RNA sequence: GGGAACGACUCGAGUAGAGUCGAAAACACUUGGAACUAACAGACAUCUUCAGAACUUUGCAUCCAACAACAACAGAAUACACAUUUUGCUCUAGCACACAUGCAUAGAACAUUCUUCAGGAUAGACCUUGUGUUAGGCCACAAAAGAAGAUUGACCGAUUGUACGGAGUUUCGACUCCGUACAAUCAAAAGAAACAACAACAACAAC
Reactivity to DMS in 0.01 (KOAc 150mM, MgCl2 10mM, bicine 150mM(pH8.5), 24C), signal-to-noise 1, nucleotides 027 to 156: c070a120c060u000u000g070g020a090a200c030u000a060a040c050a110g030a090c020a010u020c010u000u000c040a160g010a010a220c080u000u000u010g020c050a050u010c050c050a050a130c030a060a070c020a090a090c030a000g020a020a100u000a120c140a080c210a090u000u000u000u000g020c020u010c110u010a130g000c020a100c100a060c100a020u000g030c010a050u010a010g020a110a060c070a040u000u000c030u010u000c030a070g050g030a190u010a060g010a070c040c000u000u000g020u000g030u000u000a020g010g020c010c020a050c050a030a090a050a090g000a080a030g000a100u020u000g030a180c070c000
Reactivity to 2A3 in 0.01 (KOAc 150mM, MgCl2 10mM, bicine 150mM(pH8.5), 24C), signal-to-noise 4, nucleotides 027 to 156: c050a020c040u040u030g030g010a110a040c020u070a080a000c080a040g070a030c030a070u010c040u130u040c060a060g030a150a060c020u090u070u090g000c010a030u000c040c010a040a050c030a070a010c020a020a000c010a090g100a100a050u140a120c060a030c030a180u050u020u060u170g030c030u040c030u070a050g020c020a000c010a020c010a080u070g020c020a070u050a080g050a090a020c020a050u060u000c010u060u060c050a030g060g020a030u050a070g070a070c020c000u050u050g030u010g010u060u010a030g040g000c020c000a070c020a020a070a020a010g080a050a010g070a080u110u190g030a030c040c040